[RMDB]
RNA sequence: GGGAACGACUCGAGUAGAGUCGAAAAACAACCUUAGCAUCUAAAAAUUUUCUCUUUGUUUAACUUAAACCCUUCAUUUUGCUUUUUAUUAAGAUAGAGAGCAACUGAUCACCAUCCUCUAUUUAUACAUGAAAGCCUGCUAUACUCAAGCACCACACAAAAUAGGUGUCUUCGGACACCUAUUUUGAAAAGAAACAACAACAACAAC
Reactivity to 2A3 in 0.01 (KOAc 150mM, MgCl2 10mM, bicine 150mM(pH8.5), 24C), signal-to-noise 1, nucleotides 027 to 156: a000c050a020a080c000c000u020u090a030g080c000a020u050c020u090a070a110a130a300a300u160u150u130u010c000u040c000u000u080u050g080u050u190u070a040a060c030u160u230a220a200a030c020c000c030u070u020c000a050u160u200u070u110g000c000u230u160u000u020u070a040u080u150a070a000g000a060u000a000g000a010g000a000g000c000a030a000c060u030g010a000u070c010a000c090c000a000u020c030c000u050c000u010a050u030u030u030a080u060a010c000a030u070g040a050a040a030g000c000c030u030g030c000u000a010u030a120c060u070c070a000a000g140c100a000c050c170a000c010a000